Chemical mapping of a 177-nucleotide RNA with 2A3 and DMS. 2A3 is a SHAPE reagent: it acylates the 2'-hydroxyl of flexible nucleotides of all four kinds. It was measured as part of the RMDB library OK2TST. The reactions ran in a buffer of 150 mM KOAc, 10 mM MgCl2 and 150 mM bicine (pH 8.5), at 24 C.
RNA sequence: GGGAACGACUCGAGUAGAGUCGAAAAGCCAGGACACUGCCCGAGGAGCGCUACUUGGACUUCCGGCCGUCCACAGUGGCGGCUGCGUCCAUCCUGGUGGCCAUGCGGAUGUACUGCACCGACCAGGCGUUCCUGUAUGCUUCGGCAUACAGGAACGAAAAGAAACAACAACAACAAC
Reactivity to 2A3 in 0.01 (KOAc 150mM, MgCl2 10mM, bicine 150mM(pH8.5), 24C), signal-to-noise 1, nucleotides 027 to 126: g030c000c000a000g100g000a000c010a010c090u050g020c000c020c030g030a060g000g060a070g050c040g000c070u090a080c010u010u060g000g000a020c000u130u010c140c030g000g010c000c010g000u000c010c040a240c090a180g160u270g050g000c000g000g000c000u010g030c010g000u000c000c000a010u040c010c030u000g000g020u010g010g000c000c030a050u060g000c020g050g010a110u140g090u210a120c010u050g010c020a020c010c020g070a010c000c010a020g040g000
Reactivity to DMS in 0.01 (KOAc 150mM, MgCl2 10mM, bicine 150mM(pH8.5), 24C), signal-to-noise 2, nucleotides 027 to 126: g000c050c030a070g020g000a060c050a130c090u010g010c020c060c030g000a070g030g040a040g030c060g000c060u000a060c140u000u010g010g010a020c050u020u010c250c000g040g000c010c010g030u010c000c000a130c200a170g020u020g010g000c020g000g020c000u000g000c230g010u010c000c040a080u000c050c020u010g000g000u000g000g010c040c080a130u000g010c040g000g020a230u010g010u000a170c040u000g000c000a060c040c040g000a050c040c000a050g010g030
For 2A3 the reverse transcriptase was SuperScript II with manganese.